[RMDB]
RNA sequence: GGGAACGACUCGAGUAGAGUCGAAAAGAUAUGGACAACGUCGAGGGAGGGACCUCGGAAACGAGGUCCUCCCCACCCUACCCACCGAUUGUUGUCCUAAGUCAAAACCCAGCGUUCGCGCUGGGAAGCUUUGUCAGUAGUUCGCUACUGACAAAGCAAAAGAAACAACAACAACAAC
Reactivity to DMS in 0.01 (KOAc 150mM, MgCl2 10mM, bicine 150mM(pH8.5), 24C), signal-to-noise 1, nucleotides 027 to 126: g000a000u000a300u010g000g040a000c000a030a010c000g010u000c010g010a180g010g010g000a080g000g000g030a040c000c000u010c000g020g000a030a040a130c010g010a000g000g000u000c010c000u010c000c000c000c020a130c100c060c060u010a160c070c070c030a190c180c010g010a040u010u000g040u000u010g000u000c010c000u010a000a030g020u000c060a070a060a080a110c000c000c000a000g010c000g030u000u000c200g000c000g010c000u000g010g000g000a000a000
Reactivity to 2A3 in 0.01 (KOAc 150mM, MgCl2 10mM, bicine 150mM(pH8.5), 24C), signal-to-noise 2, nucleotides 027 to 126: g050a000u050a050u200g010g000a020c000a010a000c000g070u040c030g030a220g030g030g030a020g050g080g080a070c000c000u020c030g000g000a040a030a000c020g000a010g000g000u000c030c000u010c010c020c000c000a030c000c020c020u190a270c060c020c000a100c130c000g050a030u240u300g040u010u000g000u010c000c000u000a070a000g080u050c020a030a020a050a220c000c000c000a030g000c000g090u140u130c280g040c040g040c120u020g010g000g070a010a030